[RMDB]
RNA sequence: GGGAACGACUCGAGUAGAGUCGAAAACAGGCAUGCAGAGCCUGCUGCAACAGAUAACUGAAAACCCCCAGCUGAUUCAGAAUAUGCUGUCGGCGCCCUACAUGAGAAGCAUGAUGCAGUCGCUGAAAUUAAUAAAUUAGUUCGCUAAUUUAUUAAUAAAAGAAACAACAACAACAAC
Reactivity to DMS in 0.01 (KOAc 150mM, MgCl2 10mM, bicine 150mM(pH8.5), 24C), signal-to-noise 3, nucleotides 027 to 126: c040a040g000g000c020a070u020g010c110a140g030a150g010c010c010u010g000c030u010g010c060a090a060c070a060g010a110u010a120a120c020u000g010a040a030a180a240c060c040c010c040c040a110g020c090u000g000a140u010u000c040a010g020a150a090u000a050u000g000c020u010g010u000c030g010g000c040g000c030c020c020u010a040c090a060u000g000a090g010a090a080g000c010a050u010g000a100u000g010c060a060g010u000c080g000c050u010g000a050a070